[RMDB]
RNA sequence: GGGAACGACUCGAGUAGAGUCGAAAAACAAAGCAUGGCUAGAAGAUGCCACCGCGGAUAGAGCUGAGGUACUCUAGACUUCUAGCCAGAAGAAUUCCCAAACCGCGCAGAGUGCUCUCGCAAAAAACACAUUAUAGGACUUCGGUCCUAUAAUGUGAAAAGAAACAACAACAACAAC
Reactivity to 2A3 in 0.01 (KOAc 150mM, MgCl2 10mM, bicine 150mM(pH8.5), 24C), signal-to-noise 3, nucleotides 027 to 126: a000c050a020a130a000g120c030a050u020g000g010c000u000a000g000a020a010g010a070u130g070c040c030a030c010c030g000c020g030g010a070u130a120g080a010g060c120u150g080a040g020g090u060a050c010u020c010u020a070g040a140c010u000u000c000u030a010g000c000c000a000g000a010a000g000a000a060u020u000c000c020c000a010a030a010c040c010g010c010g000c080a020g030a000g100u090g030c030u030c000u060c110g040c080a100a110a020a020a000a030
Reactivity to DMS in 0.01 (KOAc 150mM, MgCl2 10mM, bicine 150mM(pH8.5), 24C), signal-to-noise 4, nucleotides 027 to 126: a070c200a110a050a110g010c050a170u000g000g000c000u010a000g020a020a030g000a170u000g010c090c100a070c210c060g020c020g010g000a240u010a050g010a050g000c060u010g000a120g000g000u000a100c010u000c040u000a050g000a130c000u000u000c010u000a000g000c000c000a020g010a040a230g000a090a170u010u000c000c000c010a060a040a120c100c060g010c020g000c090a050g010a070g020u000g000c060u010c010u000c030g000c210a010a050a040a040a070a080